[RMDB]
RNA sequence: GGGAACGACUCGAGUAGAGUCGAAAACUCGCCAAUAUGGUGAAUCACCAUCUCUACUAAACAUACACAAAUUAGCUGGGCAUGGUGGUGCGCGCCUACUCCCAGCUAUCGGGAGGCUGAGGCCGGAGAAUCACUAGAAUCAGGGAGGUGGAGGUUAUACUCCUCCGUGAUUCGUCACGGAGGAGUAAAAAGAAACAACAACAACAAC
Reactivity to 2A3 in 0.01 (KOAc 150mM, MgCl2 10mM, bicine 150mM(pH8.5), 24C), signal-to-noise 1, nucleotides 027 to 156: c030u020c020g000c030c040a080a140u160a100u220g000g000u000g010a060a030u070c010a000c060c000a020u000c000u010c000u030a020c020u050a030a080a080c090a050u160a030c090a010c030a110a060a210u100u020a020g000c040u020g000g030g000c040a030u020g040g010u020g000g110u180g030c100g030c000g020c000c000u000a000c020u010c000c010c000a010g000c000u030a010u050c020g010g000g000a050g000g020c090u050g040a040g030g010c000c010g060g000a060g040a050a020u090c000a000c090u050a040g020a050a000u110c050a070g020g050g030a000g000g010u020g000g030a010g000g000u010u040a030
Reactivity to DMS in 0.01 (KOAc 150mM, MgCl2 10mM, bicine 150mM(pH8.5), 24C), signal-to-noise 1, nucleotides 027 to 156: c030u000c000g010c020c040a140a100u050a070u020g070g020u000g000a060a020u010c010a070c010c000a050u000c020u000c000u010a150c050u000a040a050a140c170a180u000a140c180a170c060a120a160a060u000u000a020g000c020u010g000g050g000c300a050u030g020g000u000g000g020u000g010c040g020c080g020c020c000u000a070c030u000c010c000c040a050g050c190u000a020u030c100g030g000g050a030g050g000c060u020g010a090g000g020c050c030g050g050a110g000a110a070u000c020a050c000u000a050g000a080a030u000c080a080g000g000g020a080g000g000u000g020g000a050g030g000u010u000a110